[RMDB]
RNA sequence: GGGAACGACUCGAGUAGAGUCGAAAAGGUAAAUGAUGUCGCUAAGAGUAGUGACUUUACUCUCACGAACCAGGUGGAUGAAGGUGGGGAAGACGCUGUACGGUACGGGACCCCUUCAUUUAUAGCAGACUCCGACCAUAUUCGUAUGGUCGGAGUCAAAAGAAACAACAACAACAAC
Reactivity to 2A3 in 0.01 (KOAc 150mM, MgCl2 10mM, bicine 150mM(pH8.5), 24C), signal-to-noise 1, nucleotides 027 to 126: g120g020u060a030a050a110u180g040a070u140g000u000c000g020c000u170a150a000g060a040g160u110a060g030u000g000a000c000u010u000u040a000c030u030c010u010c000a020c020g200a010a010c020c000a120g050g010u060g020g000a010u010g000a010a000g170g000u300g000g010g000g140a030a030g030a000c050g040c100u000g050u100a010c030g000g010u030a020c040g000g000g000a040c000c000c000c100u020u020c000a000u000u030u000a040u120a000g070c070a000